[RMDB]
RNA sequence: GGGAACGACUCGAGUAGAGUCGAAAAAAUAGUAGCAUGAUUUAGUACGAGAGGAACUGUCAUGCCGGAUCACUGGUCUGUAGGUUUAUUUGACAAAAUAGUGACCUGCCGCUACCAUCCGUUGGAUAAUGGCUGAACGCCUCUAAGUCAGAAUCCAGUUCCUUACACAGUUCGCUGUGUAAGGAACAAAAGAAACAACAACAACAAC
Reactivity to DMS in 0.01 (KOAc 150mM, MgCl2 10mM, bicine 150mM(pH8.5), 24C), signal-to-noise 1, nucleotides 027 to 156: a090a020u020a060g000u010a050g020c000a030u000g000a040u000u000u000a030g030u000a040c020g000a240g000a150g020g030a090a080c090u010g000u010c000a080u000g010c040c020g070g030a070u000c040a060c010u000g030g000u020c040u000g050u000a110g030g000u000u000u000a090u050u010u000g010a200c170a040a040a060a120u010a040g020u010g000a020c000c000u000g000c000c100g060c020u010a050c010c010a130u000c040c070g000u030u000g000g020a100u020a100a240u000g010g000c010u000g010a100a090c090g000c050c000u000c030u000a060a130g010u000c060a030g000a150a140u010c010c010a300
Reactivity to 2A3 in 0.01 (KOAc 150mM, MgCl2 10mM, bicine 150mM(pH8.5), 24C), signal-to-noise 5, nucleotides 027 to 156: a000a000u260a020g090u050a010g000c010a000u000g000a020u020u040u050a010g010u020a020c020g000a010g010a050g130g000a030a000c010u020g010u020c010a010u020g000c040c000g010g000a010u020c020a020c070u030g010g040u100c030u040g040u030a030g010g030u010u050u070a070u040u050u130g140a060c080a030a100a020a030u060a030g130u100g070a010c000c000u000g000c000c010g000c030u030a020c030c030a010u000c010c040g050u060u080g000g000a020u010a110a010u120g010g010c010u010g020a120a040c070g140c050c020u050c030u030a060a010g000u010c000a000g020a030a040u000c000c010a000